[RMDB]
RNA sequence: GGGAACGACUCGAGUAGAGUCGAAAAACUCUAGGAAAGGGCAAACCCCAACCUACUGACUCACAGGGGGAAGAUAAAUCUGCUCAACAACAUCUCUCACACACUCCAUCUAAGGGAAAGGGUGUUGACGUAAGCGAAAGUUCGCUUUCGCUUACGUAAAAGAAACAACAACAACAAC
Reactivity to 2A3 in 0.01 (KOAc 150mM, MgCl2 10mM, bicine 150mM(pH8.5), 24C), signal-to-noise 2, nucleotides 027 to 126: a000c030u000c030u030a020g030g050a100a010a040g020g020g000c060a060a080a220c000c020c010c030a030a030c000c000u130a120c000u060g060a120c000u020c100a070c030a100g010g030g010g040g050a030a000g020a120u210a080a070a030u010c030u030g030c020u010c030a020a090c030a050a000c000a120u020c050u000c000u040c030a030c000a000c000a000c070u020c020c000a110u070c070u150a070a130g100g000g040a060a060a020g040g000g000u050g000u020u010g000
Reactivity to DMS in 0.01 (KOAc 150mM, MgCl2 10mM, bicine 150mM(pH8.5), 24C), signal-to-noise 3, nucleotides 027 to 126: a040c050u000c020u000a030g040g000a070a210a110g000g000g020c110a050a220a160c030c020c000c030a040a270c010c020u010a080c050u010g020a140c100u010c100a080c080a120g030g000g020g000g010a110a050g000a130u020a000a080a080u010c050u000g000c050u000c020a060a170c080a020a040c020a090u030c050u000c020u010c040a070c230a050c080a070c060u000c030c010a100u010c070u020a120a110g020g000g030a050a090a060g000g010g010u020g000u000u000g020
Chemical mapping of a 177-nucleotide RNA with 2A3 and DMS. For 2A3, 1,368 sequencing reads were counted. Conditions: 150 mM KOAc, 10 mM MgCl2 and 150 mM bicine (pH 8.5), 24 C. 2A3 adducts were read by reverse transcription with SuperScript II with manganese. For DMS, 1,508 sequencing reads were counted.